[RMDB]
RNA sequence: GGGAACGACUCGAGUAGAGUCGAAAAGAUAUGGAGCUGUAGAGACAUGCUGGGAGUCGGAAACGACUCUCAUCAGCAACAGCUCUGACAGCUCCUAAGUCAAAAGUGGAAUGUUCGCAUUCCACAAGUGUGCAUGCAUGUUCGCAUGCAUGCACACAAAAGAAACAACAACAACAAC
Reactivity to DMS in 0.01 (KOAc 150mM, MgCl2 10mM, bicine 150mM(pH8.5), 24C), signal-to-noise 1, nucleotides 027 to 126: g000a030u000a060u010g000g020a000g010c000u010g040u020a030g000a010g020a080c040a080u030g000c050u010g000g000g000a020g010u000c000g040g000a050a000a050c000g000a010c000u000c010u000c300a080u000c140a040g000c030a180a180c150a110g000c010u000c000u000g010a030c040a010g000c010u000c000c000u000a010a070g000u000c010a090a090a100a080g030u000g010g010a030a000u000g000u000u020c280g000c000a030u010u000c000c000a000c000a040a130
Reactivity to 2A3 in 0.01 (KOAc 150mM, MgCl2 10mM, bicine 150mM(pH8.5), 24C), signal-to-noise 2, nucleotides 027 to 126: g000a000u000a000u110g000g000a030g000c000u010g000u000a030g010a020g030a240c140a300u180g000c000u000g030g000g000a000g020u030c010g000g020a000a000a020c010g030a020c030u020c020u030c030a040u080c050a000g060c010a020a230c120a280g000c000u030c000u020g090a020c000a010g010c010u050c000c000u000a020a000g000u000c020a060a040a060a120g010u020g000g030a010a000u040g040u090u150c300g000c190a000u030u040c010c000a000c000a000a000
The record gives the reactivity of an RNA of 177 nucleotides to DMS and 2A3. Reactivities are given for positions 27 through 126. The reactions ran in a buffer of 150 mM KOAc, 10 mM MgCl2 and 150 mM bicine (pH 8.5), at 24 C. For DMS, 1,023 sequencing reads were counted.